[RMDB]
RNA sequence: GGGAACGACUCGAGUAGAGUCGAAAAGCAGUUGCAAUAACCUUGGCUUGUUUCGGACUUGCUCGGGAGGGUAAUCACAAGCCUAUUGACUACCUUAACCCACCUAAGUAAAUGUGGAAACAUCCGAUAUAAAUCUCAUAGUUAAUGGCAUAAUUAAGUAGGAGGCAUGAUUCGUCAUGCCUCCUACAAAAGAAACAACAACAACAAC
Reactivity to 2A3 in 0.01 (KOAc 150mM, MgCl2 10mM, bicine 150mM(pH8.5), 24C), signal-to-noise 2, nucleotides 027 to 156: g050c060a020g050u160u090g020c100a120a130u150a070a090c010c000u080u150g100g040c050u040u000g040u100u120u140c010g060g030a030c030u010u020g020c020u050c080g000g000g000a000g040g000g000u000a030a050u050c040a030c050a060a000g030c000c000u060a060u030u100g000a010c010u010a040c000c000u020u120a060a120c000c000c000a020c020c040u070a050a040g070u100a130a140a080u160g050u080g010g000a000a100a000c020a030u000c010c010g030a030u010a010u060a170a100a000u140c180u010c100a030u030a030g050u030u030a080a000u060g030g000c010a010u040a120a050u300u030a080a130